RNA sequence: GGGAACGACUCGAGUAGAGUCGAAAAUGACCACCUCGGCGCGGCCGCUGGUGAUGGCGUUGUACAGGUCGGCGUCCGGGAUCAGGCACAGUCGCUGAUCCCACGGGUUGUACCGCGGCGUGAAGUGAGUACGGUACUCCUUCGGGAGUACCGUACUAAAAGAAACAACAACAACAAC
Reactivity to DMS in 0.01 (KOAc 150mM, MgCl2 10mM, bicine 150mM(pH8.5), 24C), signal-to-noise 1, nucleotides 027 to 126: u020g010a220c030c000a040c030c010u000c020g010g000c020g020c100g030g000c100c030g020c060u010g000g010u000g010a060u000g000g030c040g010u000u020g010u020a100c100a130g000g000u030c010g000g000c170g030u000c070c060g010g000g020a000u000c000a000g000g010c080a250c230a080g020u000c080g000c000u000g000a030u000c000c000c010a050c010g020g000g010u030u010g000u000a140c010c070g010c060g000g010c040g080u010g020a060a110g000u040g010
Chemical mapping of a 177-nucleotide RNA with DMS. The DMS profile rests on 848 reads. For DMS the reverse transcriptase was MarathonRT. The reactions ran in a buffer of 150 mM KOAc, 10 mM MgCl2 and 150 mM bicine (pH 8.5), at 24 C.